[RMDB]
RNA sequence: GGGAACGACUCGAGUAGAGUCGAAAAGACGCAGCGAGUACGGAUCGACUCGUACGUACGAUCGAUCUAUCGUACGCUAGUAUACUAGAGAGGUACAGAUACUAGUGAUCUCGAUCUGAUCUGCUAGCCCUGUGCACACAUUCGUGUGUGCACAGGGAAAAGAAACAACAACAACAAC
Reactivity to DMS in 0.01 (KOAc 150mM, MgCl2 10mM, bicine 150mM(pH8.5), 24C), signal-to-noise 2, nucleotides 027 to 126: g000a140c160g010c050a040g000c100g000a090g020u000a070c060g010g010a050u000c020g000a020c260u000c010g030u010a070c230g040u020a030c030g000a020u020c070g000a040u000c110u020a130u010c010g020u000a050c000g000c010u000a000g010u000a020u000a070c040u000a100g020a150g000a120g020g050u000a150c090a020g000a040u000a000c000u000a000g000u000g000a080u010c110u000c040g000a030u000c040u010g000a170u010c000u000g000c010u010a190g000
Reactivity to 2A3 in 0.01 (KOAc 150mM, MgCl2 10mM, bicine 150mM(pH8.5), 24C), signal-to-noise 3, nucleotides 027 to 126: g030a000c080g000c030a000g000c040g080a020g040u050a040c040g030g020a010u010c000g030a020c120u010c030g070u080a110c120g060u200a000c020g020a000u040c020g040a030u000c020u090a080u080c060g010u000a000c010g020c000u000a000g000u010a030u040a170c070u120a020g070a030g020a030g300g140u150a080c060a050g010a020u010a010c000u010a000g060u010g100a080u030c010u000c060g020a020u000c020u060g030a070u020c010u020g010c030u010a090g010